Chemical mapping of a 177-nucleotide RNA with DMS and 2A3. The DMS profile rests on 3,698 reads. For 2A3 the reverse transcriptase was SuperScript II with manganese. Conditions: 150 mM KOAc, 10 mM MgCl2 and 150 mM bicine (pH 8.5), 24 C. Source: RMDB library OK1LIB, as collected in RNAgym.
RNA sequence: GGGAACGACUCGAGUAGAGUCGAAAAGUGGCCUGCACCAGGGCUGAGCAGUGAAGGCAUGACAAUGAGGACCCGUGUGUGCAAGCCCCCUGAGGCUUGGUAGGGCCUAGGAGUGUUCUGGGUGGGCAGAUGCCAGACUAUUCGUAGUCUGGCAUCUAAAAGAAACAACAACAACAAC
Reactivity to DMS in 0.01 (KOAc 150mM, MgCl2 10mM, bicine 150mM(pH8.5), 24C), signal-to-noise 2, nucleotides 027 to 126: g000u050g020g010c010c000u000g000c020a150c000c000a060g000g000g020c000u010g000a130g030c040a060g000u020g020a150a130g000g010c040a080u020g000a050c100a110a140u130g000a040g000g030a140c000c010c010g030u030g080u020g010u020g000c010a030a010g020c000c010c000c130c100u010g030a100g000g030c000u000u000g010g020u030a170g000g000g000c030c000u000a010g010g030a250g010u000g000u000u010c010u010g010g010g030u000g000g000g010c060
Reactivity to 2A3 in 0.01 (KOAc 150mM, MgCl2 10mM, bicine 150mM(pH8.5), 24C), signal-to-noise 4, nucleotides 027 to 126: g070u110g060g030c020c010u040g000c020a090c060c000a000g000g070g000c100u070g030a070g010c070a000g060u070g250a210a060g080g040c060a090u080g030a110c050a060a160u250g050a140g040g080a220c020c010c040g030u120g000u040g030u010g120c000a010a000g000c000c000c020c000c010u070g110a110g030g030c030u050u000g020g070u110a100g020g020g000c000c020u010a020g070g020a080g020u090g060u080u050c040u040g020g020g000u030g030g030g000c000